The record gives the reactivity of an RNA of 177 nucleotides to DMS and 2A3.
RNA sequence: GGGAACGACUCGAGUAGAGUCGAAAAGACCUUUGCAGGGGUUUGGAAAGGGGAUCCCCCUUUCACGUUUUGAGGAGGGUGCUCAGGAUGCAGACAAAGCUCCAAAGGCAUCCGUCGAAGGGGUCAACACCUAUGCACCUUUCGAGGUGCAUAGGUGAAAAGAAACAACAACAACAAC
Reactivity to DMS in 0.01 (KOAc 150mM, MgCl2 10mM, bicine 150mM(pH8.5), 24C), signal-to-noise 3, nucleotides 027 to 126: g030a090c000c010u010u000u010g000c100a110g010g000g000g040u000u020u000g030g000a010a060a030g010g000g000g030a180u010c070c010c000c000c000u020u010u020c000a160c070g010u010u000u000u010g010a120g000g000a220g000g000g000u000g000c020u000c000a300g000g000a010u040g010c030a100g030a090c300a090a100a070g020c000u000c010c020a000a100a090g000g000c000a000u000c010c010g000u000c030g000a090a040g010g000g020g000u000c090a120a130
Reactivity to 2A3 in 0.01 (KOAc 150mM, MgCl2 10mM, bicine 150mM(pH8.5), 24C), signal-to-noise 2, nucleotides 027 to 126: g010a020c000c000u050u020u110g150c110a090g060g040g000g030u050u090u080g150g010a020a000a010g000g010g100g120a210u220c000c010c010c000c010u020u000u050c030a030c080g110u000u000u050u120g050a090g050g040a050g000g060g020u040g000c040u090c180a030g010g090a040u260g040c040a010g060a250c020a080a130a010g020c030u000c010c020a000a000a000g000g000c010a000u000c010c020g140u000c000g030a050a000g020g000g030g000u050c000a040a040
Source information
DMS adducts were read by reverse transcription with MarathonRT. For 2A3, 827 sequencing reads were counted.